[RMDB]
RNA sequence: GGGAACGACUCGAGUAGAGUCGAAAAAAGAAUCUUCCUGUUGGGGAGUUUCUUCUCUCCGUUGUGGUCUAUCAGCCAGUAUCAUAAUUCCAUUAUUAGUUUCAACAUCCUCUAAAUCUGUCGAACCACCUACUAGCCCAUUCGUGGGCUAGUAGGUAAAAGAAACAACAACAACAAC
Reactivity to DMS in 0.01 (KOAc 150mM, MgCl2 10mM, bicine 150mM(pH8.5), 24C), signal-to-noise 1, nucleotides 027 to 126: a000a000g020a060a070u000c040u000u000c000c000u000g070u030u030g040g000g000g040a060g000u030u000u000c000u010u030c040u010c030u000c130c080g000u000u000g000u030g000g000u000c070u030a110u010c000a080g000c010c000a030g000u000a050u000c050a050u010a030a060u020u000c020c070a080u010u000a060u040u010a100g020u000u030u000c120a060a140c100a070u000c090c000u000c000u030a000a050a110u040c030u000g030u010c090g000a230a160c060c040
Reactivity to 2A3 in 0.01 (KOAc 150mM, MgCl2 10mM, bicine 150mM(pH8.5), 24C), signal-to-noise 2, nucleotides 027 to 126: a030a010g020a020a000u050c040u030u060c030c000u060g160u190u100g000g020g030g000a010g000u010u030u030c000u080u020c030u010c000u010c030c060g000u020u060g020u000g000g030u050c070u070a090u060c000a000g010c010c000a020g040u020a070u160c040a010u060a200a060u130u050c010c010a020u060u080a090u080u190a220g040u050u070u150c020a050a050c030a110u050c000c010u000c010u050a030a120a250u010c030u050g080u030c000g010a030a050c010c010